[RMDB]
RNA sequence: GGGAACGACUCGAGUAGAGUCGAAAAGCAGCAUGAUCACCGUCGAGCGACUCGCGCAAAACGUCAACGACUGCGGGCGGUACGGCCUCGCCGACUGCGCCGGCAGGGUUUUGGUCGGUGAGCCAACACAGGCACUGCGGUUCGCCGCAGUGCCUGUAAAAGAAACAACAACAACAAC
Reactivity to 2A3 in 0.01 (KOAc 150mM, MgCl2 10mM, bicine 150mM(pH8.5), 24C), signal-to-noise 1, nucleotides 027 to 126: g030c000a010g010c050a140u060g050a190u010c000a030c050c000g180u140c030g030a100g100c000g130a050c160u100c030g010c000g060c000a010a030a010a010c000g030u140c190a100a000c010g130a000c000u060g090c020g040g030g000c010g000g120u210a170c030g060g000c020c010u000c080g000c000c000g000a000c000u000g000c000g090c060c000g140g150c140a060g110g050g070u050u000u070u110g090g000u050c000g050g000u010g000a000g140c000c040a000a000c000